[RMDB]
RNA sequence: GGGAACGACUCGAGUAGAGUCGAAAACUCUGUGUCUGGCACUCUUCCAGGUAAGAGACAUGCAACAGUGAAUGAGCUAGCCUGCUCUUGUGAAGUUGACAUUUCAGUAAAGGGAGAAAGGUGAUACACAAAUGAAUAAACAAGAAAAUCUCAGGUGUAUUAGUCAGAAGUUCGCUUCUGACUAAUAAAAAGAAACAACAACAACAAC
Reactivity to 2A3 in 0.01 (KOAc 150mM, MgCl2 10mM, bicine 150mM(pH8.5), 24C), signal-to-noise 3, nucleotides 027 to 156: c020u040c060u040g050u000g050u050c030u040g030g010c040a030c100u070c030u060u050c060c070a070g000g090u110a060a010g030a010g020a050c010a030u080g020c030a070a040c010a090g090u050g180a110a100u090g000a030g010c030u060a030g020c040c020u030g000c020u000c000u050u070g060u040g040a130a110g010u050u020g030a030c010a050u030u090u070c020a010g020u110a070a040a090g050g020g000a040g020a040a050a000g060g020u020g040a030u030a090c040a000c000a030a130a080u130g050a040a040u110a170a060a030c080a060a020g060a090a080a040a040u050c100u030c060a030g000g080u100g000
Reactivity to DMS in 0.01 (KOAc 150mM, MgCl2 10mM, bicine 150mM(pH8.5), 24C), signal-to-noise 2, nucleotides 027 to 156: c040u000c010u010g010u030g020u000c020u000g040g050c010a200c060u000c020u000u010c030c060a200g000g020u010a100a060g010a060g020a070c030a070u000g020c000a080a110c040a140g020u010g000a160a100u010g010a060g010c030u010a160g010c030c040u000g010c010u000c020u030u000g030u020g010a100a150g000u010u020g020a160c050a150u000u000u000c020a100g010u010a060a090a140g020g020g040a070g000a050a090a070g000g050u000g000a140u000a050c060a100c060a040a060a120u020g020a070a060u010a060a060a130c060a020a120g010a100a050a090a070u000c050u000c020a070g030g020u010g030